[RMDB]
RNA sequence: GGGAACGACUCGAGUAGAGUCGAAAAGAAACGCUACGGCUCAGAUGGCCGGGACACCCGGUCCGUGGACCGAAAAAGGUGCGACAACCGCGGCCACCCGGAGACGGGGAGCUCACCAGGCCUAGAAGGGUAUACAAUUCUUCGGAAUUGUAUACCCAAAAGAAACAACAACAACAAC
Reactivity to DMS in 0.01 (KOAc 150mM, MgCl2 10mM, bicine 150mM(pH8.5), 24C), signal-to-noise 2, nucleotides 027 to 126: g000a120a020a070c060g040c040u010a060c130g000g000c030u000c080a110g000a170u030g000g000c030c000g000g000g000a270c120a070c060c040c000g000g020u010c030c050g020u060g000g100a030c000c010g020a000a060a030a100a160g030g040u000g030c170g000a070c190a140a110c030c000g000c020g040g000c010c010a080c030c040c020g000g000a110g010a160c000g000g000g010g000a080g000c050u020c000a080c010c080a160g000g010c000c010u010a100g010a160a080
Reactivity to 2A3 in 0.01 (KOAc 150mM, MgCl2 10mM, bicine 150mM(pH8.5), 24C), signal-to-noise 2, nucleotides 027 to 126: g020a020a030a010c020g010c030u060a050c060g030g000c000u030c060a050g020a300u070g010g000c000c000g030g000g000a020c010a010c000c000c000g020g020u000c000c000g060u300g040g010a060c000c000g140a140a020a000a010a040g010g000u030g060c060g110a100c090a080a070c030c000g120c010g070g000c000c000a010c010c000c010g000g000a030g030a010c020g000g000g000g000a010g010c010u020c000a040c030c000a040g020g030c000c010u010a030g030a100a060